[RMDB]
RNA sequence: GGGAACGACUCGAGUAGAGUCGAAAACUACCCACUGUUCGAGGAUCUCCUCCCUCUCCUUCGAGGACGGGUUCGCGACGGGUUGGCUCAUCCUGAGAUCGGGGAGCCUCGACGAUCUCUUUGAUCUAACCAGGAGCCUUCGGGCUCCUGAAAAGAAACAACAACAACAAC
Reactivity to DMS in 0.01 (KOAc 150mM, MgCl2 10mM, bicine 150mM(pH8.5), 24C), signal-to-noise 3, nucleotides 027 to 129: c100u130a040c000c080c000a120c230u040g060u040u000c050g030a100g010g010a060u030c090u040c000c000u020c050c090c060u000c000u000c090c210u000u160c130g000a090g040g030a050c240g000g000g000u020u070c020g080c160g060a060c140g030g000g060u000u040g060g140c020u200c020a040u000c050c000u000g020a050g050a060u010c300g070g010g090g030a040g040c030c000u000c030g070a030c120g040a100u070c040u110c140u170u050u070g030a030u000c050u070a070a140c240
Reactivity to 2A3 in 0.01 (KOAc 150mM, MgCl2 10mM, bicine 150mM(pH8.5), 24C), signal-to-noise 3, nucleotides 027 to 129: c060u150a170c050c000c000a030c050u190g060u130u050c000g000a000g050g000a120u070c000u020c080c000u010c030c020c000u070c050u040c000c100u070u200c080g070a050g020g010a000c000g000g000g060u090u230c070g010c030g100a090c020g000g150g000u050u050g020g000c000u000c050a040u040c000c000u050g000a010g000a030u020c010g000g010g000g000a000g010c000c000u020c010g020a020c000g030a060u000c010u080c000u220u070u150g020a000u000c000u050a000a040c050